This 177-nucleotide RNA was probed chemically with DMS and 2A3. For DMS the reverse transcriptase was MarathonRT. Source: RMDB libraries RFM100 and RFMREP, as collected in RNAgym.
RNA sequence: GGGAACGACUCGAGUAGAGUCGAAAAGUAAUCCGCAGACGAUCCUCAUGGGUAAGUAGAUUGAGGUAAUUAUGCGCCAGCUCGUUACUGAGAAUAUUCGUGCCGUCAUUAAUCCGCAGAAUGCAAACCAACAGACAUAUUUCGAUAUGUCUGUUGGAAAAGAAACAACAACAACAAC
Reactivity to DMS in 0.01 (KOAc 150mM, MgCl2 10mM, bicine 150mM(pH8.5), 24C), signal-to-noise 6, nucleotides 027 to 126: g010u010a110a070u030c060c020g010c050a060g010a080c090g000a080u010c020c020u000c040a040u020g010g010g010u000a060a110g010u020a090g010a100u000u020g010a110g010g010u010a060a050u000u020a060u010g010c030g000c060c070a060g000c010u000c100g000u000u010a040c060u000g000a110g010a080a040u020a050u000u000c040g010u020g010c020c040g000u000c040a050u010u010a070a090u000c020c040g020c060a080g010a070a050u010g020c090a070a080a160
Reactivity to 2A3 in 0.01 (KOAc 150mM, MgCl2 10mM, bicine 150mM(pH8.5), 24C), signal-to-noise 8, nucleotides 027 to 126: g030u050a040a060u040c010c010g000c020a030g020a080c060g030a040u070c000c010u020c010a050u080g120g020g010u140a140a070g040u050a060g060a170u030u070g020a030g030g010u020a040a070u110u120a060u130g040c040g000c030c010a020g020c010u020c040g080u080u040a080c050u060g010a000g030a110a060u110a070u120u070c030g010u060g040c020c010g030u030c010a010u030u090a050a050u040c030c020g000c020a010g060a160a020u120g010c050a050a020a030